[RMDB]
RNA sequence: GGGAACGACUCGAGUAGAGUCGAAAACGCGCCCGCGCUCGAUUUCAACGCAUUGCGGCGCUUGCUCGCCGCGCACGGCUAUCCGGACGUCGCGCUCGAAGCGGGCACGCUGGCCGGAUUCGUCAAACGAGCGACUAAUAUUCGUAUUAGUCGCUCGAAAAGAAACAACAACAACAAC
Reactivity to DMS in 0.01 (KOAc 150mM, MgCl2 10mM, bicine 150mM(pH8.5), 24C), signal-to-noise 1, nucleotides 027 to 126: c090g000c150g000c030c000c010g050c010g000c080u010c060g010a140u000u000u000c080a090a090c090g000c070a190u000u010g030c010g000g030c010g030c080u000u000g040c140u010c010g000c040c010g010c040g000c170a060c060g000g010c110u000a070u010c040c030g010g000a040c010g030u010c040g020c030g030c040u020c020g020a120a090g020c050g030g020g000c010a000c030g010c030u010g000g000c000c000g000g010a020u000u000c070g040u000c070a040a080a200
Reactivity to 2A3 in 0.01 (KOAc 150mM, MgCl2 10mM, bicine 150mM(pH8.5), 24C), signal-to-noise 1, nucleotides 027 to 126: c010g040c010g030c040c030c010g000c000g000c010u060c030g160a190u070u110u100c110a090a010c020g000c070a060u020u280g040c030g030g000c030g010c030u030u130g010c030u040c040g010c000c000g010c000g030c060a030c060g020g000c010u010a010u040c020c000g040g020a000c010g020u040c010g000c010g010c000u000c040g140a150a060g120c160g010g000g010c000a010c010g040c010u000g000g060c020c010g000g000a020u150u090c040g050u050c030a010a060a110

Source: RMDB library OK2TRN, as collected in RNAgym. The record gives the reactivity of an RNA of 177 nucleotides to DMS and 2A3. Conditions: 150 mM KOAc, 10 mM MgCl2 and 150 mM bicine (pH 8.5), 24 C.